[RMDB]
RNA sequence: GGGAACGACUCGAGUAGAGUCGAAAAACAUCAAGAAGACGCCGAUCGUCGAUACCGCAACGCGCUAGGCGCGCCGCCUUCGCCACAACCAGUCUUGGGCCCGCCCGGUCGGUGCGAGCACCUCCGCCCUGCGCGGUACCUUCGGGUACCGCGCAGGAAAAGAAACAACAACAACAAC
Reactivity to 2A3 in 0.01 (KOAc 150mM, MgCl2 10mM, bicine 150mM(pH8.5), 24C), signal-to-noise 1, nucleotides 027 to 126: a000c030a050u180c070a010a070g010a020a000g010a050c000g000c010c000g050a090u190c000g060u080c030g100a070u130a070c000c070g000c100a110a000c030g000c000g050c030u070a130g040g080c000g040c020g000c000c000g010c100c010u100u120c040g000c010c010a050c040a080a000c030c000a030g000u140c050u000u050g030g050g090c000c010c000g060c000c000c060g020g030u030c000g000g030u010g000c020g010a030g020c040a150c000c000u000c000c000g020c000